[RMDB]
RNA sequence: GGGAACGACUCGAGUAGAGUCGAAAAGAGAGUAUCGGGGAUUCUAGUAGCCAUGCAUAUAAGGUCAGAAGGUAAGAAAGAGAAAACCGCACGUAUUGAGUAGGUUUACCUUUGUAGGUGUUCACCCAUAGAUUCACUUCAUCUUCUCAAUUUUGCACCUAUAGCCUGAUUUCGAUCAGGCUAUAGGAAAAGAAACAACAACAACAAC
Reactivity to 2A3 in 0.01 (KOAc 150mM, MgCl2 10mM, bicine 150mM(pH8.5), 24C), signal-to-noise 3, nucleotides 027 to 156: g030a000g010a000g030u100a030u120c020g000g000g000g020a030u100u030c040u100a040g010u020a010g070c030c030a070u070g010c010a050u170a010u050a180a010g000g000u010c010a000g020a040a010g060g010u050a060a010g070a150a100a000g070a010g020a000a060a020a050c060c020g090c070a030c030g050u060a090u090u150g020a040g010u070a070g010g000u010u040u040a050c020c030u040u080u070g030u040a020g040g000u030g020u120u070c060a110c030c030c000a020u070a100g040a030u030u080c030a040c060u060u040c020a060u020c060u080u030c030u020c020a080a110u130u100u110u140g030c020a030
Reactivity to DMS in 0.01 (KOAc 150mM, MgCl2 10mM, bicine 150mM(pH8.5), 24C), signal-to-noise 2, nucleotides 027 to 156: g010a100g010a070g040u000a030u000c030g000g000g030g010a150u020u000c040u010a130g030u000a100g000c030c020a080u010g050c070a110u000a090u010a060a090g020g010u000c020a070g010a030a010g020g000u000a030a090g020a060a030a100g010a160g010a090a070a080a080c060c060g000c080a040c040g010u000a070u000u000g000a070g000u010a050g030g020u010u000u000a050c030c010u010u000u000g040u000a060g010g020u000g000u010u000c060a070c040c010c010a110u000a060g010a120u010u010c030a080c030u010u000c080a070u000c050u000u000c030u000c030a090a160u010u000u000u000g000c070a210